[RMDB]
RNA sequence: GGGAACGACUCGAGUAGAGUCGAAAAGGAGUGAUGCUUUCAGAGUGGCUAGUGCACCAGACGGUAACCGAUGCACUGCCGAGUAGCGAAAGUCGUUCCUUUUGGAAUGGCCUAGUUGCCCAGAAGCAAACCGAGAGGGGUUCGCCCCUCUCGGUUUAAAAGAAACAACAACAACAAC
Reactivity to 2A3 in 0.01 (KOAc 150mM, MgCl2 10mM, bicine 150mM(pH8.5), 24C), signal-to-noise 1, nucleotides 027 to 126: g150g020a020g000u100g010a230u160g070c000u030u080u030c050a040g020a030g200u270g060g030c000u300a000g000u000g010c010a000c000c080a090g010a190c010g030g140u080a090a000c000c050g040a000u060g000c000a000c000u000g000c000c000g030a030g050u070a050g000c000g000a060a000a000g020u020c020g000u040u000c000c000u090u000u110u190g000g000a010a010u060g010g000c000c000u010a020g070u020u000g020c000c000c020a030g070a000a000g020c000
Reactivity to DMS in 0.01 (KOAc 150mM, MgCl2 10mM, bicine 150mM(pH8.5), 24C), signal-to-noise 2, nucleotides 027 to 126: g000g000a020g030u000g000a090u020g010c030u010u030u060c040a040g000a250g000u010g010g000c000u020a000g000u000g000c000a040c050c040a160g040a090c180g010g000u070a080a110c110c020g030a100u000g000c010a020c010u010g010c000c000g000a120g020u030a040g000c000g020a060a180a100g010u000c000g010u000u000c000c000u030u060u000u060g000g030a030a030u000g000g000c000c000u010a130g020u000u030g030c000c050c060a090g000a030a040g010c070

The data come from the RNA Mapping Database (RMDB), library RFM100. An RNA of 177 nucleotides, treated with 2A3 and DMS and read out base by base. 2A3 adducts were read by reverse transcription with SuperScript II with manganese.